[RMDB]
RNA sequence: GGGAACGACUCGAGUAGAGUCGAAAAGCCUCCUCGCUUCCAUAGAAAGGGGACGGGGCAGAUCGCAAGUGCUACACCCGAGCGGUGGUAUCUGUCAAACUAAGCAGCCACUGCACAUCAAUUGACUAAACGAUGCCGAUCUUCGGAUCGGCAUCAACCGAACUAACAGGUUCGCCUGUUAGUUCGGAAAAGAAACAACAACAACAAC
Reactivity to 2A3 in 0.01 (KOAc 150mM, MgCl2 10mM, bicine 150mM(pH8.5), 24C), signal-to-noise 1, nucleotides 027 to 156: g000c000c010u020c010c010u010c000g060c100u050u070c010c010a140u120a210g220a010a040a060g080g030g000g020a010c070g000g000g020g040c030a010g010a020u090c010g000c060a070a060g000u010g090c010u040a040c040a070c000c090c000g070a020g000c000g020g000u010g050g010u040a070u050c020u020g080u150c020a000a090a150c090u170a060a060g010c000a000g000c000c000a000c000u000g060c050a010c000a020u260c060a100a260u100u230g080a070c100u200a000a100a030c120g000a000u010g000c000c000g000a020u010c000u010u070c150g090g000a000u000c000g000g030c000a000u000c000a000a000
The data come from the RNA Mapping Database (RMDB), library M2RFPK. Chemical mapping of a 207-nucleotide RNA with 2A3. For 2A3 the reverse transcriptase was SuperScript II with manganese. The reactions ran in a buffer of 150 mM KOAc, 10 mM MgCl2 and 150 mM bicine (pH 8.5), at 24 C. The 2A3 profile rests on 533 reads.